Structure probing data (2A3 and DMS) for a 177-nucleotide construct.
Values are in units of 0.01, from 0 to 300, in steps of 10.
RNA sequence: GGGAACGACUCGAGUAGAGUCGAAAAUGGCCAUCUUUGCGGCAUGGGAGUUGACUUUGAACAUGCCGCGACAGUGCUGGCCUACAACGGACCCGUAUUUGGUCCAAAUAUGGAUCCUGAUGAAAGCCGUUUUGAAACAGUUCGCUGUUUCAAAACGAAAAGAAACAACAACAACAAC
Reactivity to 2A3 in 0.01 (KOAc 150mM, MgCl2 10mM, bicine 150mM(pH8.5), 24C), signal-to-noise 5, nucleotides 027 to 126: u080g010g000c020c000a100u150c080u000u020u020g000c000g000g000c000a000u010g010g050g050a160g070u200u230g240a210c140u220u160u140g050a030a010c000a000u000g000c000c000g000c000g000a000c010a000g030u050g100c060u020g030g010c010c000u000a020c050a070a010c030g000g040a020c010c000c000g020u020a050u030u070u060g230g020u110c090c020a000a060a010u100a020u030g010g010a000u020c000c000u060g050a060u120g100a160a000a050g070c030
Reactivity to DMS in 0.01 (KOAc 150mM, MgCl2 10mM, bicine 150mM(pH8.5), 24C), signal-to-noise 3, nucleotides 027 to 126: u000g010g000c000c000a020u020c010u010u010u040g000c020g010g000c010a020u020g000g000g010a170g030u070u020g030a170c210u030u050u010g020a250a130c000a010u000g000c000c010g040c000g050a020c290a010g000u030g010c090u000g000g010c000c000u000a120c110a100a190c170g020g020a020c020c000c030g020u010a020u000u010u000g000g000u000c210c040a000a020a020u010a000u000g000g000a070u000c020c000u000g000a210u050g010a040a110a090g000c160